[RMDB]
RNA sequence: GGGAACGACUCGAGUAGAGUCGAAAAGAUAUGGACAUAGAACUACAGCCUGUACACCUUUGAUCUCGGAAACGAGGGAGGUGGUAGGGCUGCUAUGUCCUAAGUCAAAGGGUGCUUCGGCACCCAACACUCCCUUGGUGUUCGCACCAAGGGAGUGAAAAGAAACAACAACAACAAC
Reactivity to 2A3 in 0.01 (KOAc 150mM, MgCl2 10mM, bicine 150mM(pH8.5), 24C), signal-to-noise 2, nucleotides 027 to 126: g020a000u060a020u080g020g000a010c000a010u020a000g020a090a060c130u180a070c300a020g020c010c010u260g300u300a020c000a000c000c000u160u300u110g050a070u080c020u030c010g000g050a110a110a070c000g010a020g030g020g000a000g000g010u030g000g040u080a030g020g010g000c020u020g000c010u010a000u000g000u000c000c000u010a090a020g020u010c040a120a040a080g000g000g000u000g020c020u060u160c250g150g000c000a000c000c010c000a000a000
Reactivity to DMS in 0.01 (KOAc 150mM, MgCl2 10mM, bicine 150mM(pH8.5), 24C), signal-to-noise 2, nucleotides 027 to 126: g010a060u040a300u010g000g000a010c020a000u000a000g020a150a040c100u040a300c020a000g030c020c000u000g010u010a300c000a000c000c010u000u010u010g000a040u010c000u000c010g000g000a060a090a120c010g070a010g000g000g000a010g000g010u010g000g000u010a260g020g010g010c010u000g000c000u000a010u000g010u000c000c000u000a020a110g000u000c090a030a080a140g010g010g020u000g000c000u000u010c150g060g000c000a020c020c010c000a000a030